[RMDB]
RNA sequence: GGGAACGACUCGAGUAGAGUCGAAAACGGCGGGCGCUUCGACGGUGAGCCCGUCGGCUUCGGCGGCCGAGCGCGAGGAGGAGUCCUCACGCAGGCCGACGACUACGUCGACCCCGCUCUCGUGGAGGUUCAGCGCGUGGGCGUGACCCUGGCUGCCAUUAAGGGUAUACUUCGGUAUACCCUUAAUAAAAGAAACAACAACAACAAC
Reactivity to 2A3 in 0.01 (KOAc 150mM, MgCl2 10mM, bicine 150mM(pH8.5), 24C), signal-to-noise 1, nucleotides 027 to 156: c020g000g000c010g000g000g010c110g000c080u150u110c040g090a030c030g000g100u060g080a020g010c010c000c000g030u010c050g010g000c000u060u040c020g000g000c000g000g020c010c000g010a070g000c010g000c000g000a000g000g020a000g060g100a090g170u000c000c000u000c000a040c000g000c010a010g000g010c000c000g000a000c000g000a000c000u160a030c040g010u010c000g090a070c000c010c000c000g030c020u050c040u050c060g050u060g010g050a130g060g030u090u080c060a020g040c070g010c060g090u060g010g070g020c090g040u060g030a130c000c000c050u020g000g020c020u000g030c040c000
Reactivity to DMS in 0.01 (KOAc 150mM, MgCl2 10mM, bicine 150mM(pH8.5), 24C), signal-to-noise 1, nucleotides 027 to 156: c020g030g020c010g000g010g010c090g000c080u000u000c020g000a070c080g020g060u000g010a050g010c010c010c030g000u000c050g000g000c050u000u000c020g020g020c030g030g000c000c000g000a110g050c000g020c000g000a040g000g000a090g020g030a280g000u000c010c000u000c010a030c010g060c010a230g020g020c000c000g010a000c020g010a090c170u050a040c060g020u000c010g040a100c010c010c020c020g000c010u000c040u000c010g020u000g000g020a130g010g000u010u000c010a120g010c050g000c050g020u000g000g000g020c040g000u010g000a210c020c030c070u040g000g020c000u000g020c030c030
This 207-nucleotide RNA was probed chemically with 2A3 and DMS. The RNA was probed in 150 mM KOAc, 10 mM MgCl2 and 150 mM bicine (pH 8.5) at 24 C. 2A3 adducts were read by reverse transcription with SuperScript II with manganese. For DMS, 4,945 sequencing reads were counted. The data come from the RNA Mapping Database (RMDB), library OK3TST. The 2A3 profile rests on 1,180 reads. DMS adducts were read by reverse transcription with MarathonRT.